[RMDB]
RNA sequence: GGGAACGACUCGAGUAGAGUCGAAAAGUGUGUACGAGAGGAAGUCGUGGAAAAUCCGGCUCAGCUUCAGAAGGCUAUUCAUAAACUGAUCGGCGCCCAUGCGCGAGACCUCUCCGGGGCCCUGCAUAUGGUAGGGAUGGUUCGCCAUCCCUACCAUAAAAGAAACAACAACAACAAC
Reactivity to DMS in 0.01 (KOAc 150mM, MgCl2 10mM, bicine 150mM(pH8.5), 24C), signal-to-noise 2, nucleotides 027 to 126: g010u020g050u000g040u000a040c190g010a030g000a000g000g070a070a140g050u000c040g080u000g010g000a120a080a080a160u010c000c040g000g000c230u000c090a020g010c020u000u010c250a090g040a060a050g000g030c140u040a080u010u030c080a080u000a060a070a140c110u000g000a000u000c030g000g000c300g000c060c060c090a040u020g020c070g000c060g010a100g000a150c010c000u000c040u000c000c090g030g040g000g000c000c000c010u030g030c070a140u080
Reactivity to 2A3 in 0.01 (KOAc 150mM, MgCl2 10mM, bicine 150mM(pH8.5), 24C), signal-to-noise 2, nucleotides 027 to 126: g110u080g000u010g070u070a000c060g000a020g030a010g000g050a120a030g060u100c000g030u040g080g010a110a110a000a060u000c010c010g010g070c060u040c060a010g000c010u080u060c010a010g000a080a000g140g000c090u150a160u190u030c010a030u120a210a180a060c020u050g020a040u070c060g050g000c000g070c000c060c040a040u040g000c050g010c000g060a070g050a030c040c010u060c020u030c020c050g000g010g000g010c030c000c010u000g000c010a000u000
An RNA of 177 nucleotides, treated with DMS and 2A3 and read out base by base. For DMS the reverse transcriptase was MarathonRT. 2A3 adducts were read by reverse transcription with SuperScript II with manganese. It was measured as part of the RMDB library OK1LIB. For 2A3, 677 sequencing reads were counted.